[RMDB]
RNA sequence: GGGAACGACUCGAGUAGAGUCGAAAAAUGGUAGUUAGUCUACUCGCUAUCCUAGUUUCUUUGGAGUAAUCUAAAGUGUGUGUAAACGGGCGAAAGUCUGUAAAAUACUGGGGACAUAGGGUCAACAAGAACUAGUAGACCUUCGGGUCUACUAGAAACAUACUUAUGUGUUCGCACAUAAGUAUGUAAAAGAAACAACAACAACAAC
Reactivity to DMS in 0.01 (KOAc 150mM, MgCl2 10mM, bicine 150mM(pH8.5), 24C), signal-to-noise 4, nucleotides 027 to 156: a130u000g010g010u000a060g020u000u010a090g010u000c010u000a020c010u000c070g030c050u000a060u000c010c050u010a210g020u000u000u000c010u000u000u000g020g020a070g010u010a070a120u000c020u000a030a030a080g010u010g010u000g010u000g000u000a050a130a080c030g000g020g010c000g000a120a080a150g010u000c020u010g000u010a030a080a080a080u000a040c030u010g010g010g010g020a070c040a090u000a100g000g020g010u010c050a060a090c080a050a100g010a090a200c010u000a010g020u010a010g000a010c000c000u000u000c300g030g030g010u000c000u000a010c000u000a000g000a040a050
Reactivity to 2A3 in 0.01 (KOAc 150mM, MgCl2 10mM, bicine 150mM(pH8.5), 24C), signal-to-noise 5, nucleotides 027 to 156: a000u080g020g010u020a030g020u100u070a040g040u070c030u030a040c010u030c030g030c040u030a060u090c000c020u010a040g010u020u070u000c010u010u030u050g020g020a050g010u110a100a120u010c020u040a060a050a040g030u040g010u000g000u000g030u090a060a090a040c010g000g020g000c020g020a060a010a010g020u000c010u020g060u070a030a090a030a020u090a030c030u020g000g000g020g000a000c010a060u100a050g040g000g050u050c020a020a040c020a120a040g070a080a030c000u000a000g000u000a000g000a000c000c000u020u040c150g050g000g000u010c000u000a000c000u000a000g000a000a000